This 207-nucleotide RNA was probed chemically with 2A3. The data come from the RNA Mapping Database (RMDB), library OK3TST.
RNA sequence: GGGAACGACUCGAGUAGAGUCGAAAAUUACCAUUUUCCAGACGAGGAAAUUGAGGCUUAGGUUAAGUGACAUUCCUAAAGUUACACAGUUUUGAAGUGUCAAAAGCUGAACUUUGGUUUUCUGAUAACAAAACAAUAUUCUUUGAUUCUGUCACCCCAAGACUCCGUUGUUCGCAACGGAGUCUUGAAAAGAAACAACAACAACAAC
Reactivity to 2A3 in 0.01 (KOAc 150mM, MgCl2 10mM, bicine 150mM(pH8.5), 24C), signal-to-noise 1, nucleotides 027 to 156: u090u060a080c010c010a050u140u130u000u000c050c020a010g020a080c030g030a010g010g000a010a080a050u080u020g050a040g010g130c140u160u080a000g010g070u140u060a190a000g070u070g120a010c000a060u060u020c060c020u100a020a040a040g000u020u040a090c130a010c000a090g000u000u050u050u000g100a120a040g040u040g090u270c040a000a050a050a000g010c010u040g020a040a020c060u080u090u000g030g000u060u070u070u000c060u020g090a060u060a090a030c040a050a040a000a040c000a070a110u130a130u130u000c040u030u070u120g000a060u230u040c000u100g050u030c010a040c000c010c060